RNA sequence: GGGAACGACUCGAGUAGAGUCGAAAAAUCGUUGCUGAACGGAUUAUUAGCAGAAGCAGUCUCGGUGUUUCGUUGCUGUGAUCCCGAGUCUUGAGCUUGAAGUGACGCCUCUUUUGCUUGGGCAGUAAAUAGUGGUAGUAUUCGUACUACCACUAUUAAAAGAAACAACAACAACAAC
Reactivity to 2A3 in 0.01 (KOAc 150mM, MgCl2 10mM, bicine 150mM(pH8.5), 24C), signal-to-noise 9, nucleotides 027 to 126: a000u110c030g000u020u050g010c030u070g050a090a030c050g020g030a030u040u060a040u060u160a090g020c040a010g030a060a000g010c020a030g110u050c030u040c080g130g030u050g020u020u040u040c090g110u180u130g010c030u030g020u030g040a030u030c000c020c010g000a010g030u010c040u090u160g020a040g010c010u040u060g080a090a030g030u030g060a030c050g030c020c010u040c020u040u080u070u090g040c050u040u050g060g040g000c050a040g020u110a020
Reactivity to DMS in 0.01 (KOAc 150mM, MgCl2 10mM, bicine 150mM(pH8.5), 24C), signal-to-noise 9, nucleotides 027 to 126: a070u030c070g010u010u010g010c020u010g000a080a090c160g000g010a050u010u020a040u020u020a040g020c020a110g000a040a040g010c020a040g010u020c030u010c070g010g010u010g010u000u000u000c060g010u010u010g010c030u010g010u010g010a040u010c040c010c030g010a070g010u010c060u020u010g010a080g010c020u010u010g000a090a060g010u010g010a070c120g010c080c010u010c040u000u010u010u010g010c030u000u010g010g000g010c060a080g010u020a060